Conditions: 150 mM KOAc, 10 mM MgCl2 and 150 mM bicine (pH 8.5), 24 C. Chemical mapping of a 177-nucleotide RNA with DMS and 2A3. For 2A3 the reverse transcriptase was SuperScript II with manganese. DMS adducts were read by reverse transcription with MarathonRT. The DMS profile rests on 2,576 reads. The data come from the RNA Mapping Database (RMDB), library OK2TRN.

RNA sequence: GGGAACGACUCGAGUAGAGUCGAAAAACAGUAAAUUUCGAAAACUUGGAAAGUACGAAUGCUCUGAUUGCUUUACCAAGAUUAUCAGAAGACAUGUCACUCAAACUGAAAAAAUUUACAUACCAUACAUUUAAUAUCAGUUCGCUGAUAUUAAAUGAAAAGAAACAACAACAACAAC
Reactivity to DMS in 0.01 (KOAc 150mM, MgCl2 10mM, bicine 150mM(pH8.5), 24C), signal-to-noise 4, nucleotides 027 to 126: a100c250a140g010u000a020a020a020u010u000u010c060g010a170a070a080a130c060u000u000g020g000a100a080a030g020u000a020c130g010a170a070u010g020c110u010c050u010g000a050u010u010g010c010u000u000u000a100c230c130a010a020g000a060u000u010a070u010c020a040g000a080a100g000a090c050a020u000g010u000c120a050c060u010c030a050a050a100c040u010g010a000a060a060a010a030a030u010u000u010a010c010a120u000a140c020c020a100u010a150
Reactivity to 2A3 in 0.01 (KOAc 150mM, MgCl2 10mM, bicine 150mM(pH8.5), 24C), signal-to-noise 4, nucleotides 027 to 126: a000c020a000g010u000a000a020a040u070u040u030c020g030a050a040a110a150c030u010u020g030g010a140a050a010g020u050a030c050g040a100a040u080g010c030u030c060u110g080a130u070u100g030c030u070u030u060a200c020c010a020a020g060a110u090u100a040u040c010a000g070a140a010g040a100c030a030u180g050u120c010a020c030u060c010a080a090a070c030u040g050a050a040a000a010a010a050u030u030u020a010c020a030u130a060c010c000a010u040a100